[RMDB]
RNA sequence: GGGAACGACUCGAGUAGAGUCGAAAAAAGGCCUAACCAAUGUAGCAGAGAAGUACACAAGUUACCUGAUUAGGUAUGAUGUAUUAUUUUGUCCCAACAUAGGUCAGCGGGGACCAAGAUUACCGUACAAAUACCAUGGAUGGUACUGUAUCAGGUAGCCAAAGCGUACGUUCGCGUACGCUUUGGCAAAAGAAACAACAACAACAAC
Reactivity to DMS in 0.01 (KOAc 150mM, MgCl2 10mM, bicine 150mM(pH8.5), 24C), signal-to-noise 1, nucleotides 027 to 156: a110a060g040g030c000c030u000a050a240c020c040a040a120u000g000u000a080g020c070a110g000a130g020a100a110g010u000a010c020a060c090a080a080g000u000u010a020c000c000u000g010a080u010u000a080g040g020u000a040u000g010a110u000g040u000a010u010u000a250u000u000u000u000g020u010c000c000c000a070a100c060a130u000a050g070g000u000c050a070g070c050g050g000g020g020a100c100c100a110a140g020a080u010u000a010c000c000g000u010a020c010a080a030a030u000a010c000c000a180u000g010g020a110u010g040g010u000a010c060u020g030u000a040u000c000a110g070g000u000a060
Reactivity to 2A3 in 0.01 (KOAc 150mM, MgCl2 10mM, bicine 150mM(pH8.5), 24C), signal-to-noise 3, nucleotides 027 to 156: a000a000g050g000c010c010u040a070a040c030c020a120a130u160g050u090a050g000c080a020g010a000g020a300a000g040u130a040c060a030c020a090a120g090u110u060a030c000c020u100g050a140u260u170a010g000g030u010a010u040g060a120u070g020u050a020u040u040a060u010u170u060u030g030u000c000c010c010a010a050c080a090u210a040g010g020u060c060a010g030c100g090g000g000g000a000c020c020a110a030g080a090u110u010a050c010c020g020u010a000c000a010a100a020u070a040c000c030a040u130g230g010a140u100g040g030u000a010c010u000g000u000a010u070c020a100g040g000u070a040
Overview:
Chemical mapping of a 207-nucleotide RNA with DMS and 2A3. For DMS the reverse transcriptase was MarathonRT.